RNA sequence: GGGAACGACUCGAGUAGAGUCGAAAAUAUGGACUCAAUGACAACUCCAAGAUCUCUUACAUUCUGUCACAGAUUAGUGGGAAGUACGCAGUGGACUCCCUGGAAGGCCUGGAGGGGAUCAAGGUGAGCAACGAAAACCAUUCGUGGUUUUCGUUGCAAAAGAAACAACAACAACAAC
Reactivity to DMS in 0.01 (KOAc 150mM, MgCl2 10mM, bicine 150mM(pH8.5), 24C), signal-to-noise 1, nucleotides 027 to 126: u040a060u010g000g020a090c000u010c030a050a160u000g020a070c080a200a170c110u010c040c000a050a140g010a000u010c060u000c020u000u000a060c170a120u000u000c050u040g000u000c150a200c050a070g000a020u010u030a260g000u000g010g000g000a010a070g000u000a040c200g020c120a170g000u000g000g020a040c020u020c000c010c070u010g100g000a150a090g000g000c010c160u000g000g000a000g010g000g000g000a020u010c040a070a240g000g000u010g000a120
Reactivity to 2A3 in 0.01 (KOAc 150mM, MgCl2 10mM, bicine 150mM(pH8.5), 24C), signal-to-noise 3, nucleotides 027 to 126: u300a160u050g070g000a010c020u010c140a050a210u130g050a040c040a040a080c080u100c020c000a010a070g000a040u000c000u000c000u000u060a130c040a040u130u020c020u040g170u090c010a040c100a170g190a240u060u210a060g140u130g020g060g000a010a140g030u080a050c100g000c120a000g120u080g060g000a020c000u010c050c000c000u010g130g040a180a030g060g000c000c000u020g000g020a000g010g010g020g030a000u000c020a000a000g050g040u010g060a010
An RNA of 177 nucleotides, treated with DMS and 2A3 and read out base by base. Source: RMDB library OK1LIB, as collected in RNAgym. Reactivities are given for positions 27 through 126.